[RMDB]
Chemical mapping of a 207-nucleotide RNA with 2A3.
RNA sequence: GGGAACGACUCGAGUAGAGUCGAAAAGUCGAGCAAAACCUUCUAGUGACGCUUUCUUCUUUUUAUUAGCGAGAGCCAUGGCCAUCCUAAUCUCACCGUCUAACAACACCGGCUGGGGUCUAGGCUCUCACCGUCUUUUUGGAGGAGCCAAGCAAAAGGAAAUUAUGUCGUUCGCGACAUAAUUUCCAAAAGAAACAACAACAACAAC
Reactivity to 2A3 in 0.01 (KOAc 150mM, MgCl2 10mM, bicine 150mM(pH8.5), 24C), signal-to-noise 2, nucleotides 027 to 156: g090u090c080g030a050g000c050a050a100a070a140c010c010u100u040c070u140a040g010u060g060a000c010g140c080u090u120u070c010u100u140c090u030u060u130u040u090a300u220u230a030g120c070g030a000g000a000g010c020c020a030u150g020g020c040c000a120u170c000c060u100a170a190u200c110u060c100a040c000c020g110u170c160u150a120a060c120a050a040c020a040c000c080g130g000c070u020g010g010g000g000u010c030u010a090g020g000c010u000c000u000c000a000c010c020g030u070c070u000u260u070u040u140g030g000a010g000g000a000g020c000c020a080a000g060c020a100a050a050a000
For 2A3, 510 sequencing reads were counted. Conditions: 150 mM KOAc, 10 mM MgCl2 and 150 mM bicine (pH 8.5), 24 C. The data come from the RNA Mapping Database (RMDB), library OK3TST.